RNA sequence: GGGAACGACUCGAGUAGAGUCGAAAAGAUAUGGAUCUAGUGGUUGGAGCUCCCACUCGGAAACGAGUGGCUGAGCUAUGAAGACCCUAGAUCCUAAGUCAAAACAUAUCAUGUUCGCAUGAUAUGACCAUAUAAAUCCCUUCGGGGAUUUAUAUGGAAAAGAAACAACAACAACAAC
Reactivity to 2A3 in 0.01 (KOAc 150mM, MgCl2 10mM, bicine 150mM(pH8.5), 24C), signal-to-noise 3, nucleotides 027 to 126: g010a020u030a000u060g000g000a010u000c000u000a000g030u210g300g020u040u030g180g220a140g020c000u000c000c000c000a010c010u000c010g000g000a030a020a010c010g010a000g010u000g030g000c050u100g000a000g010c000u000a070u110g070a010a000g000a010c000c000c000u000a000g010a000u000c000c000u000a010a000g000u010c000a000a050a060a150c010a000u010a000u010c010a010u010g100u100u100c300g020c170a000u000g000a010u010a000u020g020a020
Reactivity to DMS in 0.01 (KOAc 150mM, MgCl2 10mM, bicine 150mM(pH8.5), 24C), signal-to-noise 4, nucleotides 027 to 126: g010a020u000a120u000g000g000a010u000c000u000a000g010u020g040g030u000u010g010g010a140g030c010u000c010c000c000a010c000u010c000g010g000a020a030a050c000g000a020g020u000g000g010c290u000g020a010g020c000u000a020u010g010a140a300g000a000c000c000c000u000a000g010a010u000c000c000u000a000a050g000u000c020a190a090a140a270c030a010u000a010u000c010a000u000g000u000u010c270g040c000a000u010g000a010u000a000u000g010a150
This 177-nucleotide RNA was probed chemically with 2A3 and DMS. For DMS the reverse transcriptase was MarathonRT. Conditions: 150 mM KOAc, 10 mM MgCl2 and 150 mM bicine (pH 8.5), 24 C.